The record gives the reactivity of an RNA of 177 nucleotides to DMS and 2A3. DMS adducts were read by reverse transcription with MarathonRT.
RNA sequence: GGGAACGACUCGAGUAGAGUCGAAAACUGCGUGUCGGGCCUCACCCAGCCCAAGACUGACCAUGCCCACUGCUGUGUGGAGAUGGGACUCGACAUGAUUGAUACCAUCACAUCUGUGGCUGAAGCCGUCCGCAGCAUGAUUCGUCAUGCUGCGGACAAAAGAAACAACAACAACAAC
Reactivity to DMS in 0.01 (KOAc 150mM, MgCl2 10mM, bicine 150mM(pH8.5), 24C), signal-to-noise 1, nucleotides 027 to 126: c030u000g020c020g060u000g000u000c050g010g000g010c010c000u010c150a120c030c000c050a150g080c010c080c030a090a050g010a130c120u010g000a150c120c070a100u010g010c000c010c030a040c070u000g040c100u020g020u000g000u010g000g010a190g010a080u020g020g040g030a090c090u000c030g040a040c030a070u010g000a160u030u010g000a030u000a190c050c050a000u000c070a030c090a050u010c100u000g020u020g000g010c020u000g000a180a060g000c090c110
Reactivity to 2A3 in 0.01 (KOAc 150mM, MgCl2 10mM, bicine 150mM(pH8.5), 24C), signal-to-noise 2, nucleotides 027 to 126: c030u010g050c000g040u010g000u010c030g010g020g000c020c000u000c010a070c020c000c010a000g010c000c000c040a000a040g040a020c040u040g010a040c080c000a090u150g010c010c030c010a040c040u080g030c070u070g060u020g050u060g130g050a140g020a070u060g000g010g030a040c040u000c040g050a040c070a210u140g100a300u080u230g000a030u020a080c000c020a020u000c010a000c000a110u020c030u020g070u050g020g040c000u050g010a090a020g050c030c030
2A3 adducts were read by reverse transcription with SuperScript II with manganese. The DMS profile rests on 691 reads.